[RMDB]
RNA sequence: GGGAACGACUCGAGUAGAGUCGAAAAGAUCGUCUGAAAGCUUAUCAGAGGAACCUACUUUUUUCCCUGCACCAAGUGCAGGUAGGGGGAGGUGUUUUGGUUUUGGCCGGAGCUUUGAGUGGAAGCCGUCCUUAGUAUCUUUCGAGAUACUAAGGACAAAAGAAACAACAACAACAAC
Reactivity to 2A3 in 0.01 (KOAc 150mM, MgCl2 10mM, bicine 150mM(pH8.5), 24C), signal-to-noise 4, nucleotides 027 to 126: g020a040u050c020g070u020c060u020g060a080a070a050g080c040u150u150a080u250c030a010g010a020g090g020a050a040c000c000u030a070c020u180u070u060u000u080u080c010c000c010u000g010c000a010c040c200a300a090g040u020g010c010a010g000g010u040a060g020g010g010g010g000a020g010g000u040g080u070u130u130u090g050g000u010u030u040u140g060g040c020c000g020g010a040g010c020u060u070u120g070a030g020u070g010g020a060a000g040c030c030
Reactivity to DMS in 0.01 (KOAc 150mM, MgCl2 10mM, bicine 150mM(pH8.5), 24C), signal-to-noise 6, nucleotides 027 to 126: g010a120u000c030g010u010c010u010g000a040a090a120g020c090u010u010a070u010c020a040g000a120g010g010a040a050c020c010u010a050c040u000u000u000u010u010u000c070c000c000u000g010c020a030c020c190a130a150g010u000g010c010a000g000g000u010a030g010g010g000g000g010a040g010g020u000g010u010u000u010u000g010g010u000u000u000u000g010g020c060c030g010g010a060g010c040u000u010u010g010a070g020u000g010g010a070a090g020c080c120
Source information
Structure probing data (2A3 and DMS) for a 177-nucleotide construct. The data come from the RNA Mapping Database (RMDB), library OK2TRN. DMS adducts were read by reverse transcription with MarathonRT.